[RMDB]
RNA sequence: GGGAACGACUCGAGUAGAGUCGAAAACAGUCGAAUCCUCACAAGGCUGAGACAGGCACUGGGGAAACUGAGUACCACAAGUAGCUUUGCUUAGUUAGAGGUGGAGCUGGGUGCAUGCAAUAGCACCCUUGCUCCAGCCGGCCUUCAUGGUGAGCUACGGUACGUACUCAUUCGUGAGUACGUACCGAAAAGAAACAACAACAACAAC
Reactivity to 2A3 in 0.01 (KOAc 150mM, MgCl2 10mM, bicine 150mM(pH8.5), 24C), signal-to-noise 3, nucleotides 027 to 156: c010a010g030u050c050g150a060a080u020c000c000u030c020a040c020a060a050g000g020c020u060g020a030g090a130c110a080g020g070c010a000c030u010g000g000g010g000a010a070a040c030u030g000a010g080u050a080c000c020a040c040a100a020g030u030a010g010c000u060u060u300g000c010u060u060a080g050u050u110a050g050a020g060g010u000g000g000a000g010c000u000g000g040g020u000g000c060a090u080g040c100a110a220u090a180g000c000a000c020c000c030u000u180g000c000u030c000c000a000g000c000c000g010g000c000c030u060u070c040a060u090g030g000u020g030a020g000c010u020a020
Reactivity to DMS in 0.01 (KOAc 150mM, MgCl2 10mM, bicine 150mM(pH8.5), 24C), signal-to-noise 1, nucleotides 027 to 156: c040a050g050u000c040g050a180a160u000c070c030u000c000a040c090a110a260g020g010c050u000g030a230g020a160c180a070g010g040c020a160c110u010g000g170g060g010a100a050a300c020u000g000a150g050u000a140c040c000a070c130a160a100g010u010a010g010c000u000u000u000g090c000u000u010a160g010u000u000a090g010a090g000g000u000g000g000a040g010c040u000g000g060g000u000g010c000a150u010g000c070a120a180u000a150g000c000a010c000c000c000u000u000g000c000u000c000c020a000g020c000c000g010g030c000c000u030u060c040a130u010g050g070u020g000a030g010c020u000a090